The record gives the reactivity of an RNA of 177 nucleotides to 2A3 and DMS. The RNA was probed in 150 mM KOAc, 10 mM MgCl2 and 150 mM bicine (pH 8.5) at 24 C. For 2A3 the reverse transcriptase was SuperScript II with manganese. For 2A3, 1,976 sequencing reads were counted.
RNA sequence: GGGAACGACUCGAGUAGAGUCGAAAAGCUUCGUCACUCAGACCCGUCACGGAAUGGUGUUCCACCGUGCCACCUGCCGAUGUGGAACUCAGCUGCCAUGGGCCUUCGAGCUGAUCGCGGCCGUGUCGACUCAUAGCCCGUUCGCGGGCUAUGAGUCAAAAGAAACAACAACAACAAC
Reactivity to 2A3 in 0.01 (KOAc 150mM, MgCl2 10mM, bicine 150mM(pH8.5), 24C), signal-to-noise 2, nucleotides 027 to 126: g020c010u050u060c040g040u010c010a020c030u010c010a010g020a040c000c010c000g000u030c040a020c080g030g070a090a280u120g030g020u130g040u090u040c010c000a020c010c040g100u200g080c030c070a220c070c040u180g000c030c000g090a140u100g010u010g060g000a000a000c010u030c030a020g020c010u060g030c000c030a080u100g000g000g030c010c010u110u160c090g030a050g000c100u050g020a040u170c030g000c010g030g020c000c020g040u090g040u030c020
Reactivity to DMS in 0.01 (KOAc 150mM, MgCl2 10mM, bicine 150mM(pH8.5), 24C), signal-to-noise 1, nucleotides 027 to 126: g000c020u000u010c020g000u020c010a070c020u000c030a080g000a080c010c000c020g030u020c110a120c030g000g000a100a040u020g020g030u000g000u000u010c000c010a050c050c030g000u010g020c040c210a130c300c090u040g020c040c030g010a040u010g020u000g030g000a020a040c010u000c020a050g000c030u000g050c010c210a050u000g010g000g000c030c020u010u020c170g000a070g060c130u020g010a020u000c080g010c070g000g010c040c010g010u010g010u010c020